The record gives the reactivity of an RNA of 177 nucleotides to 2A3 and DMS. The RNA was probed in 150 mM KOAc, 10 mM MgCl2 and 150 mM bicine (pH 8.5) at 24 C. For 2A3 the reverse transcriptase was SuperScript II with manganese. Values cover nucleotides 27 to 126.
RNA sequence: GGGAACGACUCGAGUAGAGUCGAAAAGACAUCACCACAAGGUGCUUCGGGGUAUCAUAUUCGCGUAAUAGUGAAUAAUGAGGUUUGGGGUGAAGGAUUUGCCUUAUCAAAAAAAGAAGCAGAGAAAAGUCACUAGUAACUUCGGUUACUAGUGACUAAAAGAAACAACAACAACAAC
Reactivity to 2A3 in 0.01 (KOAc 150mM, MgCl2 10mM, bicine 150mM(pH8.5), 24C), signal-to-noise 1, nucleotides 027 to 126: g020a000c050a030u090c020a020c100c020a020c070a150a080g150g000u070g000c050u080u010c050g010g000g000g010u060a130u220c000a000u000a030u010u030c010g010c010g060u070a050a090u070a220g020u050g080a000a010u100a070a110u070g020a060g050g030u090u210u140g040g020g000g000u050g050a010a060g010g050a080u060u010u130g060c030c000u080u080a270u150c030a040a080a080a060a000a040a020g080a000a070g030c030a010g020a000g060a210a130a000
Reactivity to DMS in 0.01 (KOAc 150mM, MgCl2 10mM, bicine 150mM(pH8.5), 24C), signal-to-noise 1, nucleotides 027 to 126: g020a060c090a130u000c060a100c040c050a050c090a030a040g010g000u000g000c050u000u000c030g040g010g000g020u000a000u010c040a090u000a000u000u010c030g040c000g000u010a160a120u010a170g020u010g000a010a000u020a080a060u010g000a040g010g010u000u010u000g010g000g010g020u000g000a010a100g000g000a170u000u000u000g010c000c040u000u000a070u000c150a010a000a050a050a040a060a140g000a040a050g000c040a050g010a150g000a070a100a080